[RMDB]
RNA sequence: GGGAACGACUCGAGUAGAGUCGAAAAUAUAAUACGCGCGUAUUAUGCGGCGUAUCGCUAUCGCUAUGCGCGCAUAGCGUAUAUACGCGCGUAUUAUCGCGCGAUAAUAGCGAUAGCGCGCGCGGCGAGUUACGCGUCAAUUCGUUGACGCGUAACUAAAAGAAACAACAACAACAAC
Reactivity to DMS in 0.01 (KOAc 150mM, MgCl2 10mM, bicine 150mM(pH8.5), 24C), signal-to-noise 2, nucleotides 027 to 126: u000a050u000a020a030u000a020c040g020c070g000c040g030u010a030u000u000a070u030g020c000g000g050c020g060u000a050u010c020g020c020u000a020u000c020g010c020u000a020u010g000c050g000c030g000c170a060u000a050g010c130g030u000a080u010a080u000a040c010g000c010g000c020g000u010a000u010u010a010u010c110g010c030g010c000g000a180u010a080a070u020a020g000c000g000a020u000a010g020c040g030c300g010c010g010c050g000g020c100g000
Reactivity to 2A3 in 0.01 (KOAc 150mM, MgCl2 10mM, bicine 150mM(pH8.5), 24C), signal-to-noise 1, nucleotides 027 to 126: u160a000u010a020a000u000a020c000g030c000g000c020g030u000a040u110u050a100u300g040c050g030g000c010g010u020a080u100c020g000c000u030a020u060c040g000c000u010a030u060g120c060g010c010g000c030a000u060a010g010c010g040u040a040u000a000u010a290c000g000c020g000c000g020u000a000u010u000a000u000c000g000c000g020c000g010a060u090a100a030u000a090g000c040g020a000u000a000g000c000g000c020g000c000g010c000g060g010c020g000